[RMDB]
RNA sequence: GGGAACGACUCGAGUAGAGUCGAAAACCAGAUGACGGUCCUGCCAUGAGACCGCUACGAGAGCAUGUCGCAUCGAAUGGACUCGGGGAGUCGGCAGCUUGCCCCACGGAUGAGCGCCUAAUGCCGGAAGAGACGUGCAACUUCGGUUGCACGUCAACCAGUAGAACAUCUUCGGAUGUUCUACUGGAAAAGAAACAACAACAACAAC
Reactivity to 2A3 in 0.01 (KOAc 150mM, MgCl2 10mM, bicine 150mM(pH8.5), 24C), signal-to-noise 3, nucleotides 027 to 156: c000c000a000g110a170u210g060a050c030g000g010u010c010c020u060g110c050c020a060u090g010a020g010a060c020c050g000c030u060a060c070g070a030g010a030g160c070a130u150g030u100c050g000c040a060u050c040g020a060a030u080g010g030a060c050u020c110g000g000g010g000a020g030u040c030g010g020c000a010g020c020u040u110g070c000c000c000c050a090c070g060g020a080u100g010a050g030c040g040c000c030u060a090a020u110g040c020c010g010g020a060a040g050a010g000a030c000g000u000g010c010a000a000c000u040u060c170g100g000u000u000g000c000a000c000g000u000c000a000a000
Reactivity to DMS in 0.01 (KOAc 150mM, MgCl2 10mM, bicine 150mM(pH8.5), 24C), signal-to-noise 1, nucleotides 027 to 156: c020c010a230g000a170u020g000a130c040g000g000u010c030c010u010g000c160c220a080u020g030a020g000a040c010c040g020c010u000a020c050g000a300g010a180g040c020a060u000g000u000c000g130c000a080u000c060g010a080a300u020g020g000a060c040u000c010g000g000g010g010a160g010u010c020g030g040c010a050g010c030u000u000g000c000c020c030c070a180c070g020g010a120u000g000a070g000c050g000c040c020u010a070a140u000g000c010c070g010g020a100a120g000a120g000a010c000g060u000g000c010a010a000c000u010u020c300g000g020u000u010g050c000a020c010g020u000c000a010a050